[RMDB]
RNA sequence: GGGAACGACUCGAGUAGAGUCGAAAAGAUAUGGAAGUUGGGAGUCUGUUAUUCCGUUGAAAGAUACUUUAUCGGAAACGAUAAAGUAUCUGGAGGAGAAUAAGACGAAGAACAACUUCCUAAGUCACCUUCUUAUGAACUUCGGUUCAUAAGAAGGAAAAGAAACAACAACAACAAC
Reactivity to DMS in 0.01 (KOAc 150mM, MgCl2 10mM, bicine 150mM(pH8.5), 24C), signal-to-noise 3, nucleotides 027 to 126: g010a060u010a300u010g000g010a000a010g020u000u000g020g020g010a210g020u000c000u000g020u000u010a090u000u000c000c010g010u020u020g020a300a120a000g000a010u000a000c000u000u000u000a000u010c000g000g000a140a090a240c010g010a010u000a010a010a020g010u000a000u000c000u000g000g000a160g010g030a070g000a020a020u000a020a060g020a030c020g010a100a120g010a120a140c000a010a020c000u000u000c000c000u000a010a090g000u000c040a180
Reactivity to 2A3 in 0.01 (KOAc 150mM, MgCl2 10mM, bicine 150mM(pH8.5), 24C), signal-to-noise 2, nucleotides 027 to 126: g020a000u060a020u220g020g010a020a000g010u000u010g010g020g050a080g050u020c010u040g170u130u100a300u250u040c040c000g070u120u100g010a000a040a020g000a000u010a010c000u000u000u010a010u000c010g020g030a090a040a060c000g010a000u000a010a010a000g000u010a000u000c000u000g010g010a020g000g000a160g040a040a020u200a260a040g020a020c060g060a180a040g040a040a030c010a000a000c010u000u000c010c000u010a180a020g050u010c010a090